[RMDB]
RNA sequence: GGGAACGACUCGAGUAGAGUCGAAAAGAUGCCAUAGCAUGGCUAUUUCUCGACUGCACUGCUGAAGUAGUUUAAGAACAUCAACCAGACUGCUGUGUUGAGAAGAAUACAGACACUGCAUUCAGAUUCAGUGAGAAAGAGUGCUUUGAUCAACUAAAAAAUGAGGGAGUUUCGACUCCCUCAUUUUAAAAGAAACAACAACAACAAC
Reactivity to DMS in 0.01 (KOAc 150mM, MgCl2 10mM, bicine 150mM(pH8.5), 24C), signal-to-noise 3, nucleotides 027 to 156: g000a180u000g020c030c020a100u010a130g010c030a300u000g000g030c010u000a240u020u020u000c020u010c020g000a080c000u000g000c040a160c040u010g000c080u000g000a000a050g000u000a090g000u000u000u000a020a120g010a100a110c100a160u010c020a010a080c020c020a100g030a220c170u000g040c020u000g010u000g010u000u000g010a100g000a080a110g000a090a120u000a160c070a140g000a050c070a030c030u000g030c070a090u000u000c010a130g000a120u000u000c050a100g000u000g020a180g020a090a060a130g000a100g020u000g000c040u000u020u000g000a150u000c050a060a080c080u070a020a040
Reactivity to 2A3 in 0.01 (KOAc 150mM, MgCl2 10mM, bicine 150mM(pH8.5), 24C), signal-to-noise 2, nucleotides 027 to 156: g100a030u130g040c000c000a030u040a020g110c090a060u020g070g000c020u010a040u020u030u010c020u000c010g130a030c000u020g010c070a030c030u140g010c000u000g030a010a010g010u020a010g000u000u030u120a120a030g050a050a030c000a090u050c010a020a010c030c000a000g150a260c220u170g100c040u000g300u030g000u070u010g030a010g010a110a010g010a130a060u130a090c040a020g070a000c020a000c040u000g000c020a300u000u000c010a010g000a070u100u000c000a000g020u000g030a030g000a010a010a000g090a000g020u060g000c000u080u040u060g020a100u070c020a010a050c030u300a070a180